[RMDB]
The record gives the reactivity of an RNA of 177 nucleotides to 2A3 and DMS.
Values cover nucleotides 27 to 126.
For 2A3 the reverse transcriptase was SuperScript II with manganese.
DMS adducts were read by reverse transcription with MarathonRT.
Conditions: 150 mM KOAc, 10 mM MgCl2 and 150 mM bicine (pH 8.5), 24 C.
The 2A3 profile rests on 2,613 reads.
RNA sequence: GGGAACGACUCGAGUAGAGUCGAAAACCAUAACAGUUCGCUGUUAUGGACUGUCGGAAUGCGGAAUAAUUAAUCGUCCGCUUACGAUUAAUAGCGACUAUAAAGCGUAACACUUCGGUGUUACGAAUGGAUUUUCUAUGUUCGCAUAGAAAAUCCAAAAAGAAACAACAACAACAAC
Reactivity to 2A3 in 0.01 (KOAc 150mM, MgCl2 10mM, bicine 150mM(pH8.5), 24C), signal-to-noise 3, nucleotides 027 to 126: c000c000a000u070a050a030c040a010g050u080u080c080g030c050u000g000u020u010a040u080g090g060a080c070u080g020u020c000g020g030a130a050u120g000c000g000g080a040a020u140a110a130u250u230a050a110u120c130g010u010c020c000g030c000u010u010a010c000g010a010u050u050a030a060u050a040g060c060g050a020c030u040a020u100a290a100a010g080c010g000u000a000a000c000a000c000u040u090c230g070g000u000g010u010u000a000c000g000a010a030
Reactivity to DMS in 0.01 (KOAc 150mM, MgCl2 10mM, bicine 150mM(pH8.5), 24C), signal-to-noise 2, nucleotides 027 to 126: c010c010a060u000a040a030c040a000g010u000u010c110g010c000u010g010u010u000a030u000g000g010a060c180u000g010u000c010g000g000a110a030u010g000c010g000g000a020a040u000a110a180u000u000a070a080u010c260g000u000c030c000g020c030u010u000a050c010g000a030u000u010a040a090u000a060g000c070g010a080c090u010a060u020a070a100a110g010c010g010u000a000a010c000a000c000u000u030c150g000g010u000g000u000u000a000c000g010a030a050